[RMDB]
RNA sequence: GGGAACGACUCGAGUAGAGUCGAAAACGAGGUCCAACUGAUCCCGACCGCAGCUGCCAAUGCGCGGCUGGCAGCCGACGUGGAUGUGCCGGGGCCUAGAUCGCGGGGCAGCAGCGAGACCGCGUCAACUCUUACACGUUUUCGAACGUGUAAGAGUAAAAGAAACAACAACAACAAC
Reactivity to DMS in 0.01 (KOAc 150mM, MgCl2 10mM, bicine 150mM(pH8.5), 24C), signal-to-noise 4, nucleotides 027 to 126: c030g000a050g000g010u000c010c210a090a080c150u020g000a070u000c010c010c000g000a130c150c010g030c050a050g040c000u000g010c000c000a070a110u050g010c020g040c010g010g000c010u000g020g000c010a030g000c000c030g010a070c070g000u020g010g020a120u030g010u010g000c040c030g000g000g000g020c000c010u010a020g010a040u020c010g010c010g010g000g000g000c030a060g000c010a040g030c020g010a130g000a050c010c010g000c040g010u010c190a140
Reactivity to 2A3 in 0.01 (KOAc 150mM, MgCl2 10mM, bicine 150mM(pH8.5), 24C), signal-to-noise 9, nucleotides 027 to 126: c040g010a030g010g030u030c050c040a090a040c160u140g050a090u030c000c000c000g050a060c050c010g010c010a010g000c000u000g000c010c010a190a200u260g090c010g000c010g020g000c000u010g000g000c010a060g220c000c010g040a090c030g090u190g120g200a220u250g090u140g120c040c010g000g000g030g000c000c010u030a070g040a190u070c010g000c000g030g010g020g000c010a020g000c000a000g000c020g010a030g030a030c000c010g030c000g050u030c030a040